[RMDB]
Conditions: 150 mM KOAc, 10 mM MgCl2 and 150 mM bicine (pH 8.5), 24 C.
The record gives the reactivity of an RNA of 177 nucleotides to 2A3 and DMS.
Reactivities are given for positions 27 through 126.
For DMS the reverse transcriptase was MarathonRT.
For DMS, 4,737 sequencing reads were counted.
The 2A3 profile rests on 6,016 reads.
RNA sequence: GGGAACGACUCGAGUAGAGUCGAAAAACACUCUUGCAGUAUCGGUUAGAUUUUGCUAAGCAAGUUAGAGAACAUGCCUUAUUAACCAAUGACGGUAGUUUCCACUCCUCUAUGGUGAGGGACCUGCCCCAUAUAGGUUCUUCGGAACCUAUAUGGGAAAAGAAACAACAACAACAAC
Reactivity to 2A3 in 0.01 (KOAc 150mM, MgCl2 10mM, bicine 150mM(pH8.5), 24C), signal-to-noise 6, nucleotides 027 to 126: a010c020a010c020u040c010u030u050g000c030a020g020u040a050u090c040g110g100u120u160a080g010a140u080u110u100u140g010c020u090a080a050g000c020a050a030g010u080u080a100g030a020g020a130a020c020a100u120g020c000c010u160u120a140u060u100a110a050c050c020a050a120u130g060a030c090g020g020u030a010g010u020u070u020c040c010a060c040u020c000c020u030c020u090a150u290g090g000u100g030a060g000g010g030a020c000c010u050g000c030
Reactivity to DMS in 0.01 (KOAc 150mM, MgCl2 10mM, bicine 150mM(pH8.5), 24C), signal-to-noise 5, nucleotides 027 to 126: a090c130a130c080u000c010u010u000g020c040a040g000u000a040u010c080g010g020u020u000a090g010a130u000u000u010u000g010c040u000a080a080g000c070a080a060g010u010u000a110g010a110g010a070a070c080a050u000g010c040c020u010u000a060u010u000a090a060c090c080a050a120u010g000a090c190g000g000u010a030g010u000u010u000c050c040a100c080u000c010c020u000c120u010a120u010g000g000u000g000a060g020g000g000a040c120c030u000g000c120